RNA sequence: GGGAACGACUCGAGUAGAGUCGAAAACUGGUCCUACAGCUGUCAGUGUACGUCCGGCCGUCUUUUUCUCUGCACUAUUCGAGUUGGUUGAAUCACUGCUCGACGCCAGUAAUUGACAUCAGGAAGGGAACAUGAAAGUGUUCGCACUUUCAUGUUCAAAAGAAACAACAACAACAAC
Reactivity to DMS in 0.01 (KOAc 150mM, MgCl2 10mM, bicine 150mM(pH8.5), 24C), signal-to-noise 4, nucleotides 027 to 126: c070u000g000g000u000c020c010u000a100c150a080g010c070u000g010u000c060a070g020u010g010u000a050c130g000u010c050c070g000g030c040c040g010u000c000u000u000u010u000u000c030u000c070u000g010c060a120c050u000a080u010u000c010g010a030g010u000u010g020g020u010u000g000a090a110u000c080a070c050u000g000c050u010c050g010a050c130g010c050c040a040g010u010a060a090u010u000g010a060c040a060u000c050a070g010g010a100a080g010g010
Reactivity to 2A3 in 0.01 (KOAc 150mM, MgCl2 10mM, bicine 150mM(pH8.5), 24C), signal-to-noise 2, nucleotides 027 to 126: c000u030g050g030u040c000c020u040a070c030a030g030c010u090g040u120c010a040g070u000g070u110a040c010g070u020c040c000g040g020c020c000g060u080c060u050u060u020u070u030c060u020c040u090g010c060a020c060u030a050u080u060c000g000a000g010u070u050g180g020u050u050g080a040a030u080c020a020c070u030g000c010u020c030g040a050c040g010c030c010a010g040u060a060a040u080u090g030a040c010a070u060c040a080g080g050a020a040g120g000